RNA sequence: GGGAACGACUCGAGUAGAGUCGAAAACAGUGCUCUUACUCUUUUCUGUAAAGAGGAGACUGCUGGACUCGCCGCCCAAGUUCGAGCAUGAGCCACGUUCCGAACGAAGAGACGCGAGGGGAAGGGGAUAGUGCUCGAGAGGGAGUGACGGUAAAGACCUGUUAUGGUAGUUCGCUACCAUAACAGGAAAAGAAACAACAACAACAAC
Reactivity to DMS in 0.01 (KOAc 150mM, MgCl2 10mM, bicine 150mM(pH8.5), 24C), signal-to-noise 2, nucleotides 027 to 156: c030a050g030u000g000c210u020c030u000u010a270c000u010c000u000u010u000u030c270u000g060u000a020a000a040g050a030g010g000a100g010a100c080u000g020c000u000g010g010a100c040u020c040g070c020c000g000c010c000c010a170a180g030u000u000c000g010a070g000c010a040u000g020a130g050c000c010a030c030g000u000u020c040c010g020a180a060c070g050a140a280g030a300g000a200c060g010c000g000a300g000g010g010g000a100a060g040g000g030g000a100u010a170g030u020g020c020u000c000g010a040g000a230g010g050g010a040g000u010g010a070c030g020g030u000a050a080a190g040a300
Reactivity to 2A3 in 0.01 (KOAc 150mM, MgCl2 10mM, bicine 150mM(pH8.5), 24C), signal-to-noise 4, nucleotides 027 to 156: c000a010g000u020g050c020u000c000u040u220a300c000u100c040u090u160u090u100c210u300g280u300a010a050a000g000a000g010g000a000g000a000c020u060g010c010u000g020g010a040c020u010c060g000c000c000g040c000c000c020a110a110g110u060u000c010g000a000g000c010a020u050g050a070g130c010c020a120c100g150u110u010c030c000g030a060a020c030g050a120a080g080a030g030a190c100g000c040g060a060g040g060g000g020a060a020g070g000g000g020a040u110a110g020u000g010c000u000c020g010a020g020a020g000g010g000a050g020u100g080a080c030g000g020u050a110a030a030g110a050